[RMDB]
Background
Structure probing data (DMS and 2A3) for a 177-nucleotide construct. Reactivities are given for positions 27 through 126. The 2A3 profile rests on 8,190 reads. 2A3 is a SHAPE reagent: it acylates the 2'-hydroxyl of flexible nucleotides of all four kinds. Conditions: 150 mM KOAc, 10 mM MgCl2 and 150 mM bicine (pH 8.5), 24 C.
RNA sequence: GGGAACGACUCGAGUAGAGUCGAAAAGAAGAGAAUAAAUAGAGGAGUCAGGGUUCGCACACGCUCCGCGAACCGACGGUAACACUGACUGUGGAGCGGAAAAGGCAGAUACGGUACUGCCAAAGAAGAUAUUAUCCCUGUUCGCAGGGAUAAUAUCAAAAGAAACAACAACAACAAC
Reactivity to DMS in 0.01 (KOAc 150mM, MgCl2 10mM, bicine 150mM(pH8.5), 24C), signal-to-noise 5, nucleotides 027 to 126: g020a060a050g000a050g000a090a060u030a030a100a050u010a070g000a100g000g000a110g000u000c020a020g000g020g010u000u000c010g030c010a080c150a160c040g000c000u020c010c040g000c010g010a040a010c010c030g000a060c150g000g020u020a050a070c160a300c020u000g000a040c040u030g000u050g000g000a020g040c000g000g010a070a060a090a110g010g010c000a000g010a280u040a070c140g020g020u020a050c000u000g000c000c020a040a070a120g020a090a060
Reactivity to 2A3 in 0.01 (KOAc 150mM, MgCl2 10mM, bicine 150mM(pH8.5), 24C), signal-to-noise 8, nucleotides 027 to 126: g110a030a020g090a000g070a070a090u210a150a080a040u260a090g100a060g130g020a030g010u020c020a020g030g020g030u010u010c010g010c000a020c010a010c120g000c000u000c020c000g000c000g000a000a010c030c010g010a050c040g040g050u090a050a010c080a010c070u040g070a010c010u050g110u130g120g000a000g000c010g010g010a060a140a000a010g000g000c000a000g000a040u140a210c090g030g060u070a020c000u000g010c000c000a040a030a000g030a050a030